[RMDB]
RNA sequence: GGGAACGACUCGAGUAGAGUCGAAAAAAUAAUUGCCAUCAUGAAAAUUCUGGGUGACUUUUGUGACUAAAGUCCCAUUGUAAGCCACAUUCUUUGUCCAGCAGUGCUCACUGACUGCUGAAAUAAACCGUCAAAUAUGAUUCGUCAUAUUUGACGGAAAAGAAACAACAACAACAAC
Reactivity to DMS in 0.01 (KOAc 150mM, MgCl2 10mM, bicine 150mM(pH8.5), 24C), signal-to-noise 3, nucleotides 027 to 126: a010a020u020a040a030u010u010g010c040c020a100u030c080a070u000g000a070a090a050a070u020u000c090u000g040g010g020u010g000a050c030u000u010u000u010g000u050g010a050c110u020a050a060a060g010u000c010c020c020a100u010u000g000u030a040a050g000c010c050a070c120a090u000u000c030u000u000u020g020u020c080c010a020g030c010a030g000u000g010c090u010c180a060c130u010g000a040c010u000g000c010u000g030a030a070a050u030a040a090a140
Reactivity to 2A3 in 0.01 (KOAc 150mM, MgCl2 10mM, bicine 150mM(pH8.5), 24C), signal-to-noise 5, nucleotides 027 to 126: a000a000u200a030a040u060u120g010c030c000a040u060c030a030u120g140a040a070a040a080u200u060c050u080g030g030g010u070g060a060c020u040u070u020u040g090u060g050a050c050u090a010a000a050g030u040c010c010c000a010u010u150g040u060a040a050g030c030c000a070c030a150u120u020c040u100u080u080g060u060c040c010a000g000c000a010g020u050g120c030u040c100a130c090u090g050a010c000u010g000c000u000g000a010a000a010u100a010a050a030